[RMDB]
RNA sequence: GGGAACGACUCGAGUAGAGUCGAAAAAUGUGCGGCAAAGAAACAUUGUUUAUGCAAAGGCACUUCGCAAUGUGUGCUCAAACAUUGCUUAUUCAAACACGCUUCACAAUGUGCGACAAAAAAACAUAAAACGUUUAGUACUUCGGUACUAAACGAAGGAUAGUUAUAGCUUCGGCUAUAACUAUCCAAAAGAAACAACAACAACAAC
Reactivity to DMS in 0.01 (KOAc 150mM, MgCl2 10mM, bicine 150mM(pH8.5), 24C), signal-to-noise 2, nucleotides 027 to 156: a070u000g020u010g000c020g060g020c070a000a120a130g000a150a060a030c000a080u000u000g000u010u000u000a100u010g040c030a060a060a130g000g010c020a020c070u000u000c080g010c090a120a060u000g020u010g000u000g010c070u000c110a050a120a050c030a020u000u000g000c010u000u000a100u000u010c040a060a130a090c060a050c070g030c040u020u000c130a080c060a000a100u010g010u010g000c020g030a140c140a000a000a060a060a060a060a100c050a090u010a050a060a100a120c030g000u010u010u000a010g020u000a010c000u000u000c280g060g000u000a000c000u000a000a020a000c000g000a020a070
Reactivity to 2A3 in 0.01 (KOAc 150mM, MgCl2 10mM, bicine 150mM(pH8.5), 24C), signal-to-noise 7, nucleotides 027 to 156: a000u120g010u090g090c030g030g010c050a060a060a070g090a060a130a010c030a040u040u060g020u040u130u100a110u100g020c040a080a030a080g100g000c010a000c000u060u050c050g000c020a010a040u050g000u000g010u040g040c040u070c150a050a060a000c010a010u000u010g000c000u070u120a150u120u130c080a030a070a020c050a010c090g020c000u050u050c010a000c010a040a060u070g020u040g030c020g060a040c130a000a110a010a040a020a030a020c080a030u230a060a100a010a030c000g000u000u000u000a000g000u000a010c000u010u020c180g090g000u000a000c000u000a000a000a000c000g000a020a010

This 207-nucleotide RNA was probed chemically with DMS and 2A3.
DMS (dimethyl sulfate) methylates the pairing face of unpaired adenines and cytosines.
For DMS, 3,381 sequencing reads were counted.
2A3 adducts were read by reverse transcription with SuperScript II with manganese.
Values cover nucleotides 27 to 156.